[RMDB]
RNA sequence: GGGAACGACUCGAGUAGAGUCGAAAAUCUUCAUGUGUUCUGAUUCUAGAUGCUAAGGCAGUAAUGACAGGACAUGGAAAAGGCUUGCCUCUGUGAGUUUCCAUACUCACUUCCAGCUACUCUGCCACUUGCUCUCAAGGCUCCAGCCACAUUGUCCUCAGAUGCUUACAUUCGUGUAAGCAUCUGAAAAAGAAACAACAACAACAAC
Reactivity to 2A3 in 0.01 (KOAc 150mM, MgCl2 10mM, bicine 150mM(pH8.5), 24C), signal-to-noise 5, nucleotides 027 to 156: u040c010u090u060c050a100u090g020u010g010u080u060c000u020g050a190u080u030c030u070a060g020a160u060g000c030u090a080a100g090g000c010a030g020u160a090a090u110g060a010c020a030g020g010a030c010a020u000g040g010a060a050a060a070g050g020c040u060u050g040c020c030u050c060u050g010u000g010a010g000u010u020u110c080c040a060u180a060c000u010c000a010c000u040u040c020c010a000g010c010u020a050c030u040c010u090g030c020c000a050c040u030u060g000c010u000c000u010c090a060a050g040g000c010u000c030c020a010g000c020c010a040c010a090u060u160g030u050c010c020
Reactivity to DMS in 0.01 (KOAc 150mM, MgCl2 10mM, bicine 150mM(pH8.5), 24C), signal-to-noise 2, nucleotides 027 to 156: u000c030u000u000c060a160u010g010u000g030u000u010c020u040g040a160u000u010c040u000a160g020a090u010g030c010u000a090a160g050g030c030a070g010u000a080a140u000g020a120c070a050g030g020a050c020a060u000g010g000a050a080a120a070g010g010c040u000u000g010c030c000u000c080u000g000u000g000a050g030u010u000u010c170c120a220u000a080c010u000c000a040c000u010u010c030c040a150g020c020u010a070c070u000c030u000g020c010c010a060c090u000u000g030c010u010c020u000c050a050a140g000g020c020u000c040c040a100g020c140c020a040c120a090u000u000g000u000c040c050
Source information
An RNA of 207 nucleotides, treated with 2A3 and DMS and read out base by base. The RNA was probed in 150 mM KOAc, 10 mM MgCl2 and 150 mM bicine (pH 8.5) at 24 C. For 2A3, 3,518 sequencing reads were counted. The DMS profile rests on 4,079 reads.